[RMDB]
This 177-nucleotide RNA was probed chemically with DMS and 2A3.
For DMS the reverse transcriptase was MarathonRT.
The DMS profile rests on 9,210 reads.
Source: RMDB library TTRDEL, as collected in RNAgym.
Conditions: 150 mM KOAc, 10 mM MgCl2 and 150 mM bicine (pH 8.5), 24 C.
RNA sequence: GGGAACGACUCGAGUAGAGUCGAAAAGAUAUGGAGCCGUGCUUUUGACGAUAUUAAAUUCGGAAACGAAAUUAUCGAUAAGCACAGGCUCCUAAGUCAAAGUACACCUUCUUCGGAAGGUGUACAACUCUAGGUACUAGUUCGCUAGUACCUAGAGAAAAGAAACAACAACAACAAC
Reactivity to DMS in 0.01 (KOAc 150mM, MgCl2 10mM, bicine 150mM(pH8.5), 24C), signal-to-noise 6, nucleotides 027 to 126: g010a010u000a150u010g000g000a010g030c000c010g010u000g000c000u000u000u000u010g010a220c060g010a020u000a000u000u000a080a080a270u000u000c000g010g000a020a020a070c010g010a020a050a060u000u000a000u000c000g010a150u000a010a000g010c000a000c000a110g040g000c000u000c000c000u010a000a080g000u000c020a130a110a150g000u000a010c000a010c000c000u000u000c000u000u010c190g010g010a010a000g010g010u000g000u010a000c000a040a070
Reactivity to 2A3 in 0.01 (KOAc 150mM, MgCl2 10mM, bicine 150mM(pH8.5), 24C), signal-to-noise 8, nucleotides 027 to 126: g010a010u030a000u090g000g000a000g000c000c010g020u010g020c030u250u240u220u300g270a140c020g000a010u010a030u040u300a240a300a300u080u020c010g010g020a020a010a010c000g000a010a020a030u030u010a010u010c040g150a230u070a300a000g000c000a000c010a000g000g000c000u000c000c000u000a000a000g000u000c020a050a050a030g000u000a000c000a000c000c000u000u000c010u020u070c160g160g000a000a000g000g010u000g000u000a000c000a000a000